[RMDB]
RNA sequence: GGGAACGACUCGAGUAGAGUCGAAAAGAUAUGGAUUCCGUUGAGAGCAACAGCUAGCGUCGGAAACGACGCUAGACAUGCUCAGACGUGAAUCCUAAGUCAAAAGGUGCACGUUCGCGUGCACCAACAUGUAGUAGCACUUCGGUGCUACUACAUGAAAAGAAACAACAACAACAAC
Reactivity to DMS in 0.01 (KOAc 150mM, MgCl2 10mM, bicine 150mM(pH8.5), 24C), signal-to-noise 4, nucleotides 027 to 126: g010a050u000a300u010g000g000a020u000u000c000c000g000u000u000g010a220g000a040g000c010a020a100c300a190g000c000u000a010g000c010g040u000c010g020g010a170a100a260c000g020a010c000g010c000u000a000g000a020c130a130u000g010c000u000c000a300g000a020c000g030u030g010a020a000u000c000c010u000a020a140g010u010c050a060a070a170a150g010g030u000g000c000a010c020g020u010u010c280g030c020g040u010g000c000a000c000c000a030a090
Reactivity to 2A3 in 0.01 (KOAc 150mM, MgCl2 10mM, bicine 150mM(pH8.5), 24C), signal-to-noise 5, nucleotides 027 to 126: g060a020u090a050u210g000g000a010u010u000c020c010g010u050u120g250a300g000a010g300c010a010a190c060a180g070c000u010a000g000c000g000u010c010g020g020a060a090a070c020g000a000c100g000c000u000a000g000a010c000a000u030g000c010u000c000a010g010a010c000g120u300g090a020a000u000c000c000u000a070a020g070u050c040a010a040a080a230g000g020u000g000c010a010c030g040u050u080c300g040c010g130u010g000c000a000c000c000a020a000
Chemical mapping of a 177-nucleotide RNA with DMS and 2A3. The RNA was probed in 150 mM KOAc, 10 mM MgCl2 and 150 mM bicine (pH 8.5) at 24 C. The 2A3 profile rests on 10,215 reads.